[RMDB]
RNA sequence: GGGAACGACUCGAGUAGAGUCGAAAAAUCAAGGCGUCCAUGCUCAAUGGCAAGCUGGUCAUGCUGCCGCGUGCCCAGUUCGAUGUGUCCGCCCUUUAUUACCAGAAGAGCCUCUAUCAGGACGAAAUCAUACUGCUGCUUUCGAGCAGCAGUAUGAAAAAGAAACAACAACAACAAC
Reactivity to 2A3 in 0.01 (KOAc 150mM, MgCl2 10mM, bicine 150mM(pH8.5), 24C), signal-to-noise 2, nucleotides 027 to 126: a010u070c030a030a020g070g000c010g060u000c040c010a010u030g000c000u030c080a060a100u170g010g040c020a010a030g020c030u020g010g040u020c000a010u010g060c000u100g100c060c170g010c020g020u010g000c000c000c000a000g020u060u050c070g060a080u070g090u030g100u100c070c000g050c000c020c000u010u090u020a120u080u080a070c040c020a030g030a140a070g020a120g020c010c020u020c040u090a170u120c070a040g020g020a020c000g030a050a040a020
Reactivity to DMS in 0.01 (KOAc 150mM, MgCl2 10mM, bicine 150mM(pH8.5), 24C), signal-to-noise 2, nucleotides 027 to 126: a110u010c130a160a110g000g020c110g020u000c030c020a090u000g010c060u000c090a080a110u010g000g020c100a120a080g000c020u010g000g020u000c070a020u000g000c000u010g030c300c140g020c020g070u010g000c070c010c020a010g020u000u020c070g020a070u000g020u000g000u020c060c090g010c040c060c050u000u000u010a080u010u000a110c070c040a090g010a080a060g000a070g000c020c060u010c070u000a130u010c100a090g000g010a010c070g010a090a100a090

Overview:
This 177-nucleotide RNA was probed chemically with 2A3 and DMS. For 2A3 the reverse transcriptase was SuperScript II with manganese. The DMS profile rests on 1,590 reads. The reactions ran in a buffer of 150 mM KOAc, 10 mM MgCl2 and 150 mM bicine (pH 8.5), at 24 C.